Chemical mapping of a 207-nucleotide RNA with DMS and 2A3. Conditions: 150 mM KOAc, 10 mM MgCl2 and 150 mM bicine (pH 8.5), 24 C. The 2A3 profile rests on 2,279 reads. Reactivities are given for positions 27 through 156. 2A3 adducts were read by reverse transcription with SuperScript II with manganese. The DMS profile rests on 1,385 reads.
[RMDB]
RNA sequence: GGGAACGACUCGAGUAGAGUCGAAAACGGCAAAAAAGCAAACUUGACCACCAAGGAUAAAAGAGAUCUUAUCCAAGGAUGCAAAAGAUAAUCGCACUUUUGACACCCACUGAUCUCGAACUUAAAGAAAACCGAGACUACUUCGGUAGUCUCGGAAGUUUUAUUAUUCCUUCGGGAAUAAUAAAACAAAAGAAACAACAACAACAAC
Reactivity to DMS in 0.01 (KOAc 150mM, MgCl2 10mM, bicine 150mM(pH8.5), 24C), signal-to-noise 1, nucleotides 027 to 156: c050g010g000c040a000a080a040a050a170a150g000c040a140a110a060c030u000u000g000a260c140c000a110c010c050a070a220g010g010a160u000a040a030a110a090g000a090g000a040u000c010u000u000a080u000c050c030a060a300g000g010a030u010g000c040a030a040a030a010g040a120u030a060a180u000c160g000c100a120c030u000u010u000u000g000a200c000a030c010c010c010a180c120u000g000a030u000c020u000c060g010a100a120c100u000u000a010a090a300g010a120a050a030a160c000c000g030a030g000a000c000u000a000c000u000u000c300g030g210u000a010g000u000c000u000c000g000g000a000a030
Reactivity to 2A3 in 0.01 (KOAc 150mM, MgCl2 10mM, bicine 150mM(pH8.5), 24C), signal-to-noise 4, nucleotides 027 to 156: c030g040g000c020a020a010a010a050a060a100g110c080a160a050a070c080u090u050g040a140c010c000a010c020c030a070a030g020g000a040u080a090a040a050a020g030a000g000a000u000c020u040u020a020u040c040c030a060a060g010g020a030u060g000c010a020a020a010a010g040a080u160a140a120u240c110g010c080a050c030u070u020u010u020g090a080c020a050c020c010c030a050c120u050g020a020u000c010u000c010g020a090a080c030u160u220a170a050a000g070a050a100a040a000c000c000g000a000g000a000c000u000a000c010u030u020c050g030g000u000a000g010u000c020u010c000g000g000a000a000